[RMDB]
RNA sequence: GGGAACGACUCGAGUAGAGUCGAAAAGUCAUUAACGCGUGUGCACUCUCUAACACGAAUUACCCAGUUAUUUUCGACUUUACUCCAGUCGUUAUAGCGUGAUAUGAGAGAGUAAUCCGCGACCAAAGCUUCUCUAAGAAUUCGUUCUUAGAGAAGCAAAAGAAACAACAACAACAAC
Reactivity to DMS in 0.01 (KOAc 150mM, MgCl2 10mM, bicine 150mM(pH8.5), 24C), signal-to-noise 3, nucleotides 027 to 126: g010u010c180a110u020u000a010a020c080g000c010g000u000g010u000g020c090a020c010u000c010u000c010u000a170a010c010a000c000g010a140a100u010u000a140c100c070c070a140g000u010u000a030u000u000u000u000c010g000a010c000u000u000u000a010c000u000c010c120a010g010u000c000g010u000u000a020u000a120g010c010g020u010g000a030u000a080u010g010a050g000a040g000a060g010u000a150a090u000c020c010g000c010g010a150c020c020a070a120a100
Reactivity to 2A3 in 0.01 (KOAc 150mM, MgCl2 10mM, bicine 150mM(pH8.5), 24C), signal-to-noise 4, nucleotides 027 to 126: g060u070c070a150u120u170a050a020c060g010c020g120u000g000u010g020c010a030c080u010c000u020c000u020a020a000c000a010c020g050a060a130u150u100a130c030c050c040a020g000u040u050a090u070u020u000u000c000g010a000c000u010u010u000a010c000u000c010c000a000g000u000c000g000u000u010a010u020a010g000c000g020u120g050a000u020a040u190g040a030g000a000g000a000g010u010a010a040u000c020c000g020c010g020a020c000c000a040a070a020